[RMDB]
RNA sequence: GGGAACGACUCGAGUAGAGUCGAAAAUGGGGGCCAAGCUGAGGGCCGGCGUCCGCAUAAGGAGCGUGAACGAUGCUAUCGAGGCGCUCCGGAGGCUAUCACGCGGCGAGACGAUAGACUCUCCCCGUAACUUCAGGUAUUUCGAUACCUGAAGUUAAAAAGAAACAACAACAACAAC
Reactivity to 2A3 in 0.01 (KOAc 150mM, MgCl2 10mM, bicine 150mM(pH8.5), 24C), signal-to-noise 4, nucleotides 027 to 126: u070g010g000g000g020g020c020c010a010a030g000c060u100g050a100g040g060g010c010c020g040g020c000g060u020c020c010g020c030a030u050a140a070g010g000a010g020c000g030u030g060a150a030c020g020a010u200g300c160u250a050u110c000g020a020g120g000c000g000c010u000c000c000g000g000a010g030g000c000u040a080u150c050a030c080g030c000g020g000c020g010a020g010a020c040g050a070u040a100g020a030c010u000c010u040c020c000c010c010g000
Reactivity to DMS in 0.01 (KOAc 150mM, MgCl2 10mM, bicine 150mM(pH8.5), 24C), signal-to-noise 9, nucleotides 027 to 126: u010g010g010g010g020g020c040c030a090a120g020c080u010g000a160g020g010g020c020c020g020g030c050g010u000c070c120g010c040a060u010a180a160g010g000a020g010c010g010u000g000a150a120c020g010a030u000g020c240u010a110u000c000g010a150g000g000c000g000c000u000c000c010g000g000a110g000g000c020u000a070u000c090a080c070g010c040g000g010c030g000a100g000a110c090g000a090u010a060g000a050c030u000c010u000c020c010c000c060g010
Chemical mapping of a 177-nucleotide RNA with 2A3 and DMS. Conditions: 150 mM KOAc, 10 mM MgCl2 and 150 mM bicine (pH 8.5), 24 C. Source: RMDB library OK2TST, as collected in RNAgym. For DMS the reverse transcriptase was MarathonRT.